[RMDB]
RNA sequence: GGGAACGACUCGAGUAGAGUCGAAAACUAUUCAAAAACCGCCAUCGCCGCAGUUUUAACCGUAAUGCUUUACUCCCGCCCCGCUAUUCUGGGACGCGAACGCAUCACCGGGCUGGAAACCAUGCGCCGCCCGCACACUGACGGCCCCUACGUCCGCACAGUUAGUAGUCUUCGGACUACUAACUGUAAAAGAAACAACAACAACAAC
Reactivity to 2A3 in 0.01 (KOAc 150mM, MgCl2 10mM, bicine 150mM(pH8.5), 24C), signal-to-noise 1, nucleotides 027 to 156: c050u080a090u130u260c060a050a100a000a150a050c020c000g040c000c010a130u110c030g030c040c010g010c040a020g010u130u060u030u120a050a110c050c020g020u060a100a020u080g000c010u070u110u100a080c030u010c050c050c010g000c030c010c000c000g060c060u070a200u160u140c160u120g010g000g020a010c020g000c040g010a060a010c040g000c020a000u000c010a040c010c060g020g000g000c010u140g050g020a040a140a000c020c050a070u050g030c020g040c030c000g040c010c010c010g030c050a020c000a000c010u030g050a050c010g000g000c000c010c000c010u070a060c050g060u020c010c040g160c060